[RMDB]
RNA sequence: GGGAACGACUCGAGUAGAGUCGAAAAUUGAACUCAGCCGUCAGUGCUCUUAACCACCGAGCCAGACUCCAACCCCAACCAAGAGGUUGGGUUUCUCUAUGGCCUGGGAUUAAAGGUGUGUUCCACCUCUAGGCAUCUAUUUCGAUAGAUGCCUAGAAAAAGAAACAACAACAACAAC
Reactivity to DMS in 0.01 (KOAc 150mM, MgCl2 10mM, bicine 150mM(pH8.5), 24C), signal-to-noise 3, nucleotides 027 to 126: u010u000g020a110a120c050u010c040a080g010c030c040g010u010c070a050g040u000g000c020u010c030u000u010a080a150c110c080a100c070c100g010a070g000c020c020a080g000a070c070u000c060c060a070a080c190c020c000c010a020a040c080c070a160a120g010a080g000g010u000u000g000g000g000u000u000u000c040u000c030u000a090u000g010g010c070c010u010g010g020g000a110u000u000a040a070a070g020g010u000g010u010g010u010u000c050c030a070c080c030
Reactivity to 2A3 in 0.01 (KOAc 150mM, MgCl2 10mM, bicine 150mM(pH8.5), 24C), signal-to-noise 1, nucleotides 027 to 126: u040u050g020a040a040c000u010c050a020g000c040c030g060u090c060a050g030u030g170c000u000c000u080u070a080a080c000c020a030c020c050g020a000g000c000c020a010g040a020c030u020c030c000a010a040c020c000c000c010a010a000c030c010a140a160g140a110g210g020u000u040g000g000g000u010u080u010c040u010c000u000a080u100g020g000c040c030u020g010g000g030a050u010u220a170a140a040g000g000u000g010u000g020u030u030c020c000a030c000c020